[RMDB]
RNA sequence: GGGAACGACUCGAGUAGAGUCGAAAAGUGCUUCCGUUGCGUACCGAAGAGGAACGCGUGCUCGCUGAAGAAACAGUCUUCAUGGCAGUGCUCCGCGAAGAGCUGCAGGCAGUCUUUGCGGAGUACGAUCGCAACAUCAGCGUGAUCAUGGCCAUGAUGACGCUUACGUAUUCGUACGUAAGCGUCAAAAAGAAACAACAACAACAAC
Reactivity to 2A3 in 0.01 (KOAc 150mM, MgCl2 10mM, bicine 150mM(pH8.5), 24C), signal-to-noise 6, nucleotides 027 to 156: g080u070g010c020u050u000c030c010g100u110u170g000c010g000u030a090c000c020g040a150a060g050a080g110g030a060a040c020g000c030g050u060g030c040u080c060g030c020u050g030a070a030g030a070a150a030c040a050g050u020c010u030u000c020a000u010g000g000c020a010g010u010g000c000u000c000c000g000c000g000a000a000g030a090g060c020u050g020c070a190g170g020c010a020g020u020c000u000u000u000g000c000g000g000a000g000u000a000c000g000a010u010c010g000c020a050a110c020a260u180c090a020g030c020g070u030g010a010u040c040a100u120g110g000c020c000a000u010g000a030
Reactivity to DMS in 0.01 (KOAc 150mM, MgCl2 10mM, bicine 150mM(pH8.5), 24C), signal-to-noise 3, nucleotides 027 to 156: g020u010g030c020u010u000c000c030g000u010u010g010c040g050u000a140c020c040g020a120a110g020a210g020g030a120a050c040g050c030g020u000g000c030u010c040g030c030u010g010a070a080g000a090a190a120c030a200g010u000c030u000u000c020a040u000g010g000c040a280g030u010g000c000u000c010c010g000c030g000a040a010g010a060g030c040u000g020c100a190g020g010c030a110g000u000c000u000u000u000g010c020g010g010a020g010u000a000c000g000a030u000c030g010c040a080a080c110a120u030c120a150g020c070g010u000g000a070u000c030a120u000g040g000c000c000a060u000g000a100
An RNA of 207 nucleotides, treated with 2A3 and DMS and read out base by base. The reactions ran in a buffer of 150 mM KOAc, 10 mM MgCl2 and 150 mM bicine (pH 8.5), at 24 C. The 2A3 profile rests on 5,675 reads. The DMS profile rests on 6,540 reads. 2A3 adducts were read by reverse transcription with SuperScript II with manganese. The data come from the RNA Mapping Database (RMDB), library OK3TST.